[RMDB]
RNA sequence: GGGAACGACUCGAGUAGAGUCGAAAAAACGCAUUCGUGCGUUAGAUAAGAUAUGGAUUUGGCCGAGUACGGAACUACUGCGGAUCCUCGGAAACGAGGAGAAGCAGCCGUACGUUUGACGCCAAAUCCUAAGUCGAUACCCUUCCUUCGGGAAGAAUUAUCAGCGUUUAUUCGUAAACGCUGAUAAAAAAGAAACAACAACAACAAC
Reactivity to DMS in 0.01 (KOAc 150mM, MgCl2 10mM, bicine 150mM(pH8.5), 24C), signal-to-noise 2, nucleotides 027 to 156: a000a000c010g040c020a060u000u030c300g030u000g010c000g000u000u000a000g020a130u030a120a200g020a040u000a300u010g020g000a020u000u000u000g030g040c030c010g000a190g030u000a040c000g000g000a080a070c080u000a190c020u000g020c020g050g020a300u000c000c000u000c000g000g000a180a100a230c000g020a020g000g000a000g000a270a300g000c020a010g030c020c040g040u000a020c020g010u000u000u010g010a220c270g040c040c010a020a020a040u000c000c000u020a000a110g020u020c000g000a130u000a090c040c010c010u000u000c010c080u010u000c160g050g000g050a060a030g000a090a090
Reactivity to 2A3 in 0.01 (KOAc 150mM, MgCl2 10mM, bicine 150mM(pH8.5), 24C), signal-to-noise 4, nucleotides 027 to 156: a000a010c030g000c030a040u090u110c240g090u050g010c000g000u020u020a070g030a100u100a080a050g000a000u040a040u100g000g000a000u000u010u000g010g000c000c020g040a040g020u010a000c000g010g030a050a030c070u300a040c000u300g000c010g050g070a040u010c000c000u000c000g000g040a070a040a030c000g000a000g020g010a010g010a010a000g010c000a000g000c000c000g010u000a000c000g010u000u090u090g070a040c030g000c010c010a000a000a010u000c000c000u010a030a010g000u000c010g000a020u130a130c010c010c000u000u020c020c000u040u070c220g080g000g020a000a010g000a040a080
Description
Structure probing data (DMS and 2A3) for a 207-nucleotide construct. Values cover nucleotides 27 to 156. Conditions: 150 mM KOAc, 10 mM MgCl2 and 150 mM bicine (pH 8.5), 24 C. The DMS profile rests on 3,081 reads. 2A3 adducts were read by reverse transcription with SuperScript II with manganese. It was measured as part of the RMDB library RNAMAK.